[RMDB]
RNA sequence: GGGAACGACUCGAGUAGAGUCGAAAACUAUAUCCAUGUGAUUCACGUCACAGUCAAUAACCCACGAUGUCAAAGAACAAAAGUGUUGGAUCCACUUUUGACAGGUUACCAUGUGCCACAUCGACCCCCGUCCUGAACGAUUCGUCGUUCAGGACGGAAAAGAAACAACAACAACAAC
Reactivity to DMS in 0.01 (KOAc 150mM, MgCl2 10mM, bicine 150mM(pH8.5), 24C), signal-to-noise 1, nucleotides 027 to 126: c090u000a000u010a070u000c130c060a060u040g070u040g000a000u000u030c280a070c290g000u000c000a000c000a030g010u000c130a090a130u000a060a150c080c000c020a090c130g000a060u040g000u020c180a100a020a070g070a050a160c060a040a000a000a000g000u000g000u000u060g000g000a010u040c300c060a000c000u000u020u000u050g000a180c080a060g000g000u000u020a000c150c120a030u030g010u060g000c070c010a100c130a000u000c060g000a160c000c000c060
Reactivity to 2A3 in 0.01 (KOAc 150mM, MgCl2 10mM, bicine 150mM(pH8.5), 24C), signal-to-noise 3, nucleotides 027 to 126: c020u040a040u000a020u240c080c040a060u030g000u000g030a070u160u210c110a030c120g010u000c010a000c000a000g090u080c050a080a210u020a110a110c060c020c000a030c040g000a010u080g050u140c130a080a060a090g070a030a190c000a020a030a000a000g010u020g010u100u180g090g010a020u020c030c000a000c000u000u040u000u000g070a020c000a040g080g030u070u080a090c040c030a090u170g010u080g080c030c000a000c000a050u050c030g070a040c030c000c040
An RNA of 177 nucleotides, treated with DMS and 2A3 and read out base by base.
As a SHAPE reagent, 2A3 marks flexible, mostly unpaired nucleotides at the ribose 2'-OH.
It was measured as part of the RMDB library OK1LIB.
For DMS, 1,111 sequencing reads were counted.
Conditions: 150 mM KOAc, 10 mM MgCl2 and 150 mM bicine (pH 8.5), 24 C.